[RMDB]
RNA sequence: GGGAACGACUCGAGUAGAGUCGAAAACCUGCCUUGGGCUCGUCAGGGGAUCGGCUCCAGACCCCGACCAGUUUGUGUAGGGAUGGCCUAGUCCCCUCUUCAGCGUUAAGUCCUCGACCAGCGACAAGCUCCCCCCAAACUCAACCGGGUCGGCCUGCUCCUUAGAUAUGUUCGCAUAUCUAAGGAGAAAAGAAACAACAACAACAAC
Reactivity to 2A3 in 0.01 (KOAc 150mM, MgCl2 10mM, bicine 150mM(pH8.5), 24C), signal-to-noise 1, nucleotides 027 to 156: c010c030u010g040c020c020u010u020g040g000g000c020u030c040g070u070c030a040g000g000g030g000a040u080c040g010g010c040u050c180c000a150g000a210c000c010c020c010g030a050c030c000a220g050u090u300u230g190u200g010u060a010g020g000g000a030u050g030g000c000c010u000a030g070u020c000c040c000c000u010c060u130u100c030a060g010c020g050u050u050a030a000g050u080c020c000u020c020g100a110c060c060a020g020c050g120a190c130a120a090g030c040u110c000c000c000c000c020c000a000a010a020c000u020c000a000a020c010c010g000g000g040u000c000g030g020c000c000u000g000
Chemical mapping of a 207-nucleotide RNA with 2A3. Values cover nucleotides 27 to 156. It was measured as part of the RMDB library VIROID. For 2A3, 1,136 sequencing reads were counted. 2A3 adducts were read by reverse transcription with SuperScript II with manganese. Conditions: 150 mM KOAc, 10 mM MgCl2 and 150 mM bicine (pH 8.5), 24 C.